[RMDB]
RNA sequence: GGGAACGACUCGAGUAGAGUCGAAAACGUAUCCUACGGCACGAAUAGCAGCAACAAUAGGGCGGUCGCGGUGACUUCAAGUUGGACGGCGAAUCCAGGGUUUGCACCCGUCUCGUGUAUCGGGGCGACAAAGUGGCCUGCGUCGGCGGGUACACGCGGUAAGCCCAUAAUUCGUUAUGGGCUUACCAAAAGAAACAACAACAACAAC
Reactivity to DMS in 0.01 (KOAc 150mM, MgCl2 10mM, bicine 150mM(pH8.5), 24C), signal-to-noise 2, nucleotides 027 to 156: c080g030u010a100u000c040c020u020a080c070g010g040c040a110c060g010a110a080u020a110g020c020a080g020c050a070a110c110a110a080u010a100g020g000g050c080g030g030u020c040g020c020g000g030u020g010a070c020u000u000c040a050a170g030u000u010g010g020a070c030g000g010c080g020a100a100u000c020c050a080g010g030g030u000u000u000g040c040a090c030c030c010g010u000c010u000c020g000u010g010u000a110u000c010g020g020g050g050c000g000a100c040a000a110a090g040u010g010g010c040c020u000g010c090g030u010c140g000g020c030g010g000g020u000a060c040a040c000g000c100
Reactivity to 2A3 in 0.01 (KOAc 150mM, MgCl2 10mM, bicine 150mM(pH8.5), 24C), signal-to-noise 4, nucleotides 027 to 156: c040g050u050a090u110c000c020u060a060c030g010g000c030a010c060g030a060a020u060a100g040c080a000g030c010a000a050c020a060a220u120a180g020g070g000c060g050g000u030c020g010c050g040g000u040g020a060c020u050u040c150a060a100g020u030u020g080g010a010c050g040g050c020g040a020a010u040c010c030a020g020g040g020u000u050u100g020c030a060c010c010c030g020u000c020u020c030g050u070g010u030a050u230c010g000g000g040g040c000g010a040c050a000a100a010g040u040g010g010c000c000u020g000c000g060u120c080g090g080c020g000g010g000u050a110c020a000c020g040c000